[RMDB]
RNA sequence: GGGAACGACUCGAGUAGAGUCGAAAACGGAACACAAAGGCAGUGCCACCGGCGGCAUGGAAUCGAUUGACAUCGGCUUCACCGUUGGGAUAGACGCGUGCCAGGAGUGGUACGGUUUGGGAGAUGCCGAGCCGGUGAGUUUCGACUCACCGGCUCGAAAAGAAACAACAACAACAAC
Reactivity to 2A3 in 0.01 (KOAc 150mM, MgCl2 10mM, bicine 150mM(pH8.5), 24C), signal-to-noise 1, nucleotides 027 to 126: c000g000g040a070a000c020a000c000a090a210a140g030g000c000a000g040u000g070c030c010a000c000c010g110g000c000g000g000c060a100u060g020g010a100a090u000c000g030a080u090u110g110a060c120a100u010c000g020g000c040u000u010c040a040c000c010g000u000u000g010g010g000a010u100a140g050a030c080g000c020g230u050g000c030c000a020g020g010a070g030u020g030g000u030a000c020g000g000u000u080u050g030g000g000a060g060a040u060g080c100
About this RNA:
An RNA of 177 nucleotides, treated with 2A3 and read out base by base. The reactions ran in a buffer of 150 mM KOAc, 10 mM MgCl2 and 150 mM bicine (pH 8.5), at 24 C.